RNA sequence: GGGAACGACUCGAGUAGAGUCGAAAAGUCUUUGUCAAUUGAGGAGUUUGCUGACGUAGUAAAGGAACAAGUCUCAGACUUGCUUGUUAAAUUACUGCGUGGAAUGCCGAUUCCAGAUUUUGAUUUACAAUAUCCUAUAGUUCGCUAUAGGAUAUUGAAAAGAAACAACAACAACAAC
Reactivity to DMS in 0.01 (KOAc 150mM, MgCl2 10mM, bicine 150mM(pH8.5), 24C), signal-to-noise 7, nucleotides 027 to 126: g000u000c020u010u010u000g010u000c020a020a020u000u000g000a300g010g000a030g010u000u000u010g000c000u000g010a030c010g020u000a010g000u000a000a020a110g010g010a030a020c000a010a010g000u000c110u010c170a120g000a040c090u000u000g000c010u000u000g000u000u000a040a070a100u000u000a010c000u000g000c010g000u000g020g010a060a040u010g000c010c070g010a030u000u000c000c000a050g000a200u000u000u000u000g000a030u000u000u010a140
Reactivity to 2A3 in 0.01 (KOAc 150mM, MgCl2 10mM, bicine 150mM(pH8.5), 24C), signal-to-noise 7, nucleotides 027 to 126: g020u020c010u080u150u110g020u000c000a000a030u010u010g010a020g010g000a010g010u010u020u010g000c010u030g040a010c010g000u000a000g000u010a010a040a030g110g050a040a000c010a010a010g030u000c040u020c140a070g050a180c040u050u050g010c000u000u010g020u020u040a060a110a030u020u010a000c000u010g010c010g000u020g020g190a130a030u050g000c000c010g010a010u010u010c000c010a060g060a300u000u000u010u020g010a020u030u050u080a040